[RMDB]
The record gives the reactivity of an RNA of 177 nucleotides to DMS and 2A3. It was measured as part of the RMDB library OK1LIB. 2A3 adducts were read by reverse transcription with SuperScript II with manganese. Conditions: 150 mM KOAc, 10 mM MgCl2 and 150 mM bicine (pH 8.5), 24 C.
RNA sequence: GGGAACGACUCGAGUAGAGUCGAAAAUACGUCAAGAUAGUUGCUGCUGAUGAUUCAUCCAAUGUCAUCGGUGAAUGUGUUUACGAAAAUGGUGAGUUCUCUGGCGGUGCUGACGGGUGUACCGUCACAGCUAUGGCAGGUUCGCCUGCCAUAGCUGAAAAGAAACAACAACAACAAC
Reactivity to DMS in 0.01 (KOAc 150mM, MgCl2 10mM, bicine 150mM(pH8.5), 24C), signal-to-noise 2, nucleotides 027 to 126: u030a070c060g000u000c090a050a100g040a140u000a050g020u020u010g000c060u000g000c030u000g000a040u000g000a060u000u010c160a110u010c080c130a120a100u020g000u000c020a040u000c010g000g010u000g000a070a060u030g030u000g010u000u000u020a040c090g010a050a090a070a140u000g010g020u000g000a070g000u000u000c010u010c020u000g000g010c030g010g000u010g000c080u010g000a070c050g000g000g010u070g030u030a050c000c000g000u020c060a030
Reactivity to 2A3 in 0.01 (KOAc 150mM, MgCl2 10mM, bicine 150mM(pH8.5), 24C), signal-to-noise 3, nucleotides 027 to 126: u160a040c030g030u010c070a040a020g080a090u070a040g160u080u160g090c040u020g000c010u020g020a020u000g000a010u090u010c050a110u080c020c100a090a100u120g020u030c020a040u030c090g040g010u070g050a060a080u080g030u020g020u140u140u080a080c080g050a070a020a000a140u100g040g010u050g040a140g060u120u010c040u020c020u040g020g000c000g000g060u010g000c010u020g010a130c040g060g070g020u170g010u000a030c000c000g000u000c000a010